An RNA of 177 nucleotides, treated with 2A3 and DMS and read out base by base. High 2A3 reactivity points to a flexible backbone, as in loops and unpaired stretches.
RNA sequence: GGGAACGACUCGAGUAGAGUCGAAAAUAAAAGCUAUCGACAUCUGGAUGGCUGUGUGCCUUCUCUUUGUGUUUGCUGCAUUACUGGAAUAUGCCGCAGUCAAUUUUGUUUCAAGGCAGCACAAGGAAUGCCUUGUUCUUUUCGAAGAACAAGGCAUAAAAGAAACAACAACAACAAC
Reactivity to 2A3 in 0.01 (KOAc 150mM, MgCl2 10mM, bicine 150mM(pH8.5), 24C), signal-to-noise 5, nucleotides 027 to 126: u130a000a110a020a000g000c000u010a020u020c010g130a090c100a160u110c180u120g140g000a020u020g010g000c020u010g030u010g010u090g060c000c000u110u170c030u010c000u030u020u030g070u030g040u070u140u090g000c020u030g010c020a030u070u050a150c090u200g040g040a100a030u160a040u160g030c010c060g010c040a000g030u030c010a020a070u050u050u130u170g140u020u060u080c050a050a040g030g040c020a000g000c000a020c000a020a010g060g010a080
Reactivity to DMS in 0.01 (KOAc 150mM, MgCl2 10mM, bicine 150mM(pH8.5), 24C), signal-to-noise 4, nucleotides 027 to 126: u030a040a090a070a050g020c000u000a000u000c020g020a140c240a060u050c150u040g030g000a020u010g000g000c000u000g020u030g010u010g010c070c040u000u040c060u000c000u010u020u000g010u010g010u010u010u030g010c000u010g020c110a060u010u010a110c130u020g010g000a090a060u030a070u010g000c020c080g010c060a060g010u010c100a050a040u010u010u020u000g000u010u000u020c110a070a110g000g000c000a040g000c020a020c020a020a020g000g000a090
For 2A3 the reverse transcriptase was SuperScript II with manganese. For DMS the reverse transcriptase was MarathonRT.